Conditions: 150 mM KOAc, 10 mM MgCl2 and 150 mM bicine (pH 8.5), 24 C. The record gives the reactivity of an RNA of 177 nucleotides to 2A3 and DMS. Reactivities are given for positions 27 through 126. For DMS, 2,754 sequencing reads were counted. DMS adducts were read by reverse transcription with MarathonRT.
[RMDB]
RNA sequence: GGGAACGACUCGAGUAGAGUCGAAAAAACAGCUGCUUCGGCAGCUGUUAACGCUCGCGGCUCGAGGCUGCACGAGCCGGACAGCAGCCAGUCGGCGAGCUAUAGCCUUGGAGUUCGCUCCAAGGAAUAUUUACCCGUGAUUCGUCACGGGUAAAUAAAAAGAAACAACAACAACAAC
Reactivity to 2A3 in 0.01 (KOAc 150mM, MgCl2 10mM, bicine 150mM(pH8.5), 24C), signal-to-noise 1, nucleotides 027 to 126: a000a000c000a000g000c000u030g020c000u050u040c100g090g000c000a000g000c000u000g000u010u000a000a010c050g000c000u000c010g000c000g000g040c000u030c080g180a090g000g000c000u000g040c050a060c120g100a070g110c070c000g010g090a040c020a020g000c000a000g000c010c000a000g010u020c020g250g090c030g010a030g010c000u030a050u040a030g060c000c000u020u000g010g000a010g000u060u060c080g090c040u000c000c000a000a000g000g040a010a010
Reactivity to DMS in 0.01 (KOAc 150mM, MgCl2 10mM, bicine 150mM(pH8.5), 24C), signal-to-noise 3, nucleotides 027 to 126: a020a000c000a000g030c000u010g010c000u010u010c230g030g010c010a020g020c000u000g010u000u000a040a050c190g000c020u010c000g010c010g010g000c000u000c190g010a110g010g000c000u010g020c020a080c130g000a130g020c090c070g000g010a090c120a140g000c000a020g020c020c020a040g000u000c020g030g020c000g000a020g020c010u000a030u000a120g010c000c010u000u000g000g000a030g020u000u000c220g010c000u000c000c000a000a000g010g000a050a040